[RMDB]
The data come from the RNA Mapping Database (RMDB), library OK3TST. The record gives the reactivity of an RNA of 207 nucleotides to 2A3 and DMS. DMS adducts were read by reverse transcription with MarathonRT. The RNA was probed in 150 mM KOAc, 10 mM MgCl2 and 150 mM bicine (pH 8.5) at 24 C. For 2A3, 2,773 sequencing reads were counted.
RNA sequence: GGGAACGACUCGAGUAGAGUCGAAAAGAAAGAAAGAGAGCCACUAACCAAGAGAAAGAGAGCAAGGACUAGCCCUGAAUAAUUGGUCAACGAUGCUGAUUUCGUUGGUUUCCUGUUCCUUUUGCUUCCUGGAAAAUACAGACCUACAAAGCAAAAAUAUGCUAAUCACUUUCGAGUGAUUAGCAUAAAAAGAAACAACAACAACAAC
Reactivity to 2A3 in 0.01 (KOAc 150mM, MgCl2 10mM, bicine 150mM(pH8.5), 24C), signal-to-noise 4, nucleotides 027 to 156: g030a010a050a010g050a030a070a000g050a000g010a010g010c040c010a020c020u060a050a040c020c050a070a010g030a010g050a050a100a010g080a010g020a000g010c020a050a030g030g000a010c020u030a010g020c030c010c000u030g050a060a040u130a150a040u150u120g030g000u030c020a020a010c030g030a010u060g050c140u090g060a150u080u040u030c020g000u010u010g000g000u030u050u020c000c000u010g010u020u060c000c040u040u080u020u030g030c010u020u030c000c030u010g030g010a080a070a010a030u170a050c060a040g110a060c020c030u110a050c070a100a080a010g070c020a020a080a160a030a070
Reactivity to DMS in 0.01 (KOAc 150mM, MgCl2 10mM, bicine 150mM(pH8.5), 24C), signal-to-noise 2, nucleotides 027 to 156: g010a110a070a140g000a100a080a080g000a100g010a130g000c040c050a090c050u000a120a110c040c020a050a070g010a130g000a070a100a130g010a170g010a080g020c020a040a080g020g000a080c060u000a110g020c000c010c010u000g020a080a060u000a060a150u000u000g030g000u000c050a040a090c070g010a090u010g020c050u000g010a180u000u000u010c060g010u000u000g020g000u000u010u000c080c070u000g030u000u000c000c010u010u010u000u010g000c020u000u000c030c040u000g000g010a080a050a080a160u010a110c070a110g020a100c070c040u010a060c070a040a080a070g020c030a000a080a050a050a240